[RMDB]
RNA sequence: GGGAACGACUCGAGUAGAGUCGAAAACUAUGCAGAUUCGUCUGCAUAGAGACCCGAUGAAGCGGCACUAACACAGCUUCAUACACGUAAGAAGUGCAAUAAAGGGACGAGGGUUCGCCCUCGUCAAAGAGUACUCGAGAUUCGUCUCGAGUACUCUAAAAGAAACAACAACAACAAC
Reactivity to DMS in 0.01 (KOAc 150mM, MgCl2 10mM, bicine 150mM(pH8.5), 24C), signal-to-noise 2, nucleotides 027 to 126: c000u000a000u000g000c010a000g000a020u000u010c140g040u000c000u010g000c000a010u000a000g000a090g000a250c000c000c010g000a020u010g010a000a000g020c000g030g080c070a040c070u000a170a130c180a080c080a130g000c010u000u020c010a000u010a070c130a070c150g000u000a030a050g020a170a110g020u000g000c130a140a070u000a050a100a160g010g000g010a010c010g010a010g000g030g020u010u020c220g000c000c000c000u000c000g010u000c000a000a070
Reactivity to 2A3 in 0.01 (KOAc 150mM, MgCl2 10mM, bicine 150mM(pH8.5), 24C), signal-to-noise 2, nucleotides 027 to 126: c000u010a020u000g020c000a020g050a080u050u100c110g130u040c110u000g030c020a000u010a000g010a000g020a040c000c030c000g000a020u010g000a010a010g030c040g040g000c110a040c110u090a170a020c160a000c040a150g000c000u000u000c020a000u040a030c130a010c070g050u080a040a070g040a220a010g090u020g000c020a030a150u260a240a130a040g230g020g010a010c010g000a000g000g010g040u020u090c130g150c010c000c000u000c000g000u000c000a000a000